[RMDB]
RNA sequence: GGGAACGACUCGAGUAGAGUCGAAAAGCCGAUUCGUCGGCAUUGGGGAUAUGGACCAUAUUAGUCAGUAUGGCAAGGCCACUCGUCGGAAACGACGAGCGGCUGAUGACCCAUACUGAAUUUAUGGUCCUAAGUCAGAAUGGGUUUUCGAACCCAAUAAGCACUACUGAUUCGUCAGUAGUGCUUAAAAAGAAACAACAACAACAAC
Reactivity to 2A3 in 0.01 (KOAc 150mM, MgCl2 10mM, bicine 150mM(pH8.5), 24C), signal-to-noise 1, nucleotides 027 to 156: g000c010c000g000a010u060u080c220g070u010c010g110g000c010a030u090u170g040g000g000g020a020u030a060u190g020g000a000c000c000a010u000a030u040u080a100g120u010c020a000g020u000a000u000g030g000c030a080a080g010g010c000c000a050c020u010c010g010u010c000g060g000a080a110a070c020g000a020c020g000a000g000c010g000g000c000u010g000a030u020g000a020c000c010c000a000u000a000c010u000g000a000a010u030u000u000a000u000g000g020u000c000c000u000a010a000g050u030c020a000g030a060a100u100g000g020g020u020u040u070u090c150g060a030a000c000c000c000a000a010
Reactivity to DMS in 0.01 (KOAc 150mM, MgCl2 10mM, bicine 150mM(pH8.5), 24C), signal-to-noise 2, nucleotides 027 to 156: g040c020c000g020a090u000u000c220g010u000c010g010g020c010a100u000u010g020g000g000g010a130u010a210u000g030g010a010c000c020a010u000a020u000u000a090g030u000c030a050g010u000a010u000g000g040c000a070a120g030g000c000c000a020c000u000c020g000u010c010g010g000a280a100a260c000g030a010c000g010a010g000c010g000g010c000u020g030a030u000g010a060c300c010c000a030u000a010c000u010g020a020a010u000u000u000a030u000g000g020u000c010c000u000a000a080g030u000c040a100g020a150a130u000g010g030g020u020u000u000u010c140g010a080a040c000c010c010a040a150
Chemical mapping of a 207-nucleotide RNA with 2A3 and DMS. As a SHAPE reagent, 2A3 marks flexible, mostly unpaired nucleotides at the ribose 2'-OH. The DMS profile rests on 3,845 reads. The RNA was probed in 150 mM KOAc, 10 mM MgCl2 and 150 mM bicine (pH 8.5) at 24 C. For DMS the reverse transcriptase was MarathonRT. Source: RMDB library RNAMAK, as collected in RNAgym.